An RNA of 177 nucleotides, treated with DMS and 2A3 and read out base by base. DMS adducts were read by reverse transcription with MarathonRT. The RNA was probed in 150 mM KOAc, 10 mM MgCl2 and 150 mM bicine (pH 8.5) at 24 C. The 2A3 profile rests on 8,105 reads.
RNA sequence: GGGAACGACUCGAGUAGAGUCGAAAACUGUUUUGUGCGUUCCUCCAAUAGCGCCGUAAGGGCCGCACGAUUGGCGACGCGUGCCGAAUUGGUAGCGAAACGCUCGUCCUUUGCCAGUUCACCGAUAGGUGGACCAUUUAUUCGUAAAUGGUCCACCAAAAGAAACAACAACAACAAC
Reactivity to DMS in 0.01 (KOAc 150mM, MgCl2 10mM, bicine 150mM(pH8.5), 24C), signal-to-noise 7, nucleotides 027 to 126: c060u010g010u010u000u000u000g020u000g000c020g000u000u000c020c010u000c030c050a060a070u010a120g020c090g020c020c020g020u010a120a130g020g010g010c090c060g000c050a060c100g000a140u000u010g020g000c170g010a080c100g010c030g010u010g010c050c060g000a120a080u010u000g010g010u000a080g010c070g000a080a100a060c060g010c020u000c040g010u000c030c050u000u010u000g020c110c020a060g000u000u000c040a110c030c020g010a120u010a090
Reactivity to 2A3 in 0.01 (KOAc 150mM, MgCl2 10mM, bicine 150mM(pH8.5), 24C), signal-to-noise 5, nucleotides 027 to 126: c030u020g090u080u110u130u140g090u070g010c010g010u010u000c010c010u010c000c000a040a040u060a090g050c060g000c060c010g040u070a060a130g100g040g000c000c010g010c000a060c050g120a150u080u190g030g010c020g010a030c030g030c040g050u080g000c020c030g100a180a170u110u110g030g020u080a030g060c020g080a140a040a010c030g010c020u010c020g070u090c000c000u100u090u070g040c010c000a030g010u060u050c080a080c090c010g040a100u160a140